[RMDB]
The data come from the RNA Mapping Database (RMDB), libraries RFM100 and RFMREP. Structure probing data (DMS and 2A3) for a 177-nucleotide construct. DMS adducts were read by reverse transcription with MarathonRT. Conditions: 150 mM KOAc, 10 mM MgCl2 and 150 mM bicine (pH 8.5), 24 C. For 2A3 the reverse transcriptase was SuperScript II with manganese.

RNA sequence: GGGAACGACUCGAGUAGAGUCGAAAAUUUAACGUGGACAAAGACUUACAGAUAGGUGCAAAAAAUAAAUCCUCUUUUGCAACCCAGAACUCAUUGUUCAGUAUGAGUUUUGAUACAUAUAAGAAGGCUCCUUCUAGAAUUUCGAUUCUAGAAGGAGAAAAGAAACAACAACAACAAC
Reactivity to DMS in 0.01 (KOAc 150mM, MgCl2 10mM, bicine 150mM(pH8.5), 24C), signal-to-noise 3, nucleotides 027 to 126: u010u020u030a030a080c090g020u020g000g000a060c070a050a070a080g000a080c030u000u000a040c070a050g010a140u020a060g020g010u000g000c000a010a000a030a030a100a040u020a030a120a050u000c040c070u000c050u000u000u010u000g020c040a070a090c080c050c030a020g000a020a020c010u000c020a010u010u000g000u040u020c190a100g030u040a030u000g000a060g000u000u000u000u000g010a110u010a070c080a070u040a070u020a050a140g000a140a110g000g000
Reactivity to 2A3 in 0.01 (KOAc 150mM, MgCl2 10mM, bicine 150mM(pH8.5), 24C), signal-to-noise 4, nucleotides 027 to 126: u150u150u070a080a020c050g060u080g020g010a010c040a030a110a000g020a050c040u100u110a060c040a070g180a270u140a110g040g000u040g030c020a030a020a010a000a020a030u190a040a150a010u040c020c000u050c020u010u000u000u040g020c030a080a180c010c010c010a000g000a000a020c010u010c010a040u000u090g120u300u110c050a070g100u070a000u000g010a010g000u000u000u000u000g040a020u060a090c080a030u170a010u070a180a070g120a030a020g040g030